[RMDB]
Background: An RNA of 177 nucleotides, treated with DMS and 2A3 and read out base by base. 2A3 adducts were read by reverse transcription with SuperScript II with manganese. For DMS the reverse transcriptase was MarathonRT. The reactions ran in a buffer of 150 mM KOAc, 10 mM MgCl2 and 150 mM bicine (pH 8.5), at 24 C.
RNA sequence: GGGAACGACUCGAGUAGAGUCGAAAAGAUAUGGACGUGUGUAGGGAGUUGUUGUCGGAAACGACAAUACAACGAAGAACUAUAUACACGUCCUAAGUCAAAAUCGAUUGGGUUCGCCCAAUCGAAAGCUAUAGAUUGUCUUCGGACAAUCUAUAGCAAAAGAAACAACAACAACAAC
Reactivity to DMS in 0.01 (KOAc 150mM, MgCl2 10mM, bicine 150mM(pH8.5), 24C), signal-to-noise 3, nucleotides 027 to 126: g000a020u000a080u020g000g000a020c010g030u000g010u000g010u000a030g030g060g020a110g020u000u000g020u000u010g000u000c000g000g010a000a020a060c000g000a040c000a030a090u000a050c050a010a010c030g010a180a140g020a120a180c080u000a060u000a020u000a020c020a010c000g010u000c000c000u000a020a060g000u000c020a110a090a190a140u000c000g000a010u000u000g000g000g010u000u010c300g030c030c000c000a000a010u000c000g010a020a020a110
Reactivity to 2A3 in 0.01 (KOAc 150mM, MgCl2 10mM, bicine 150mM(pH8.5), 24C), signal-to-noise 4, nucleotides 027 to 126: g000a020u030a000u070g000g000a000c020g000u000g000u010g010u010a030g080g220g200a170g030u000u040g010u010u020g000u020c010g000g030a000a010a020c000g020a000c000a000a020u300a110c040a020a000c050g090a120a120g110a290a090c060u000a010u010a010u000a120c030a000c010g000u000c000c000u000a000a000g010u000c010a010a020a010a300u050c000g000a000u000u010g020g000g070u050u070c300g090c040c020c020a010a010u010c000g000a020a010a000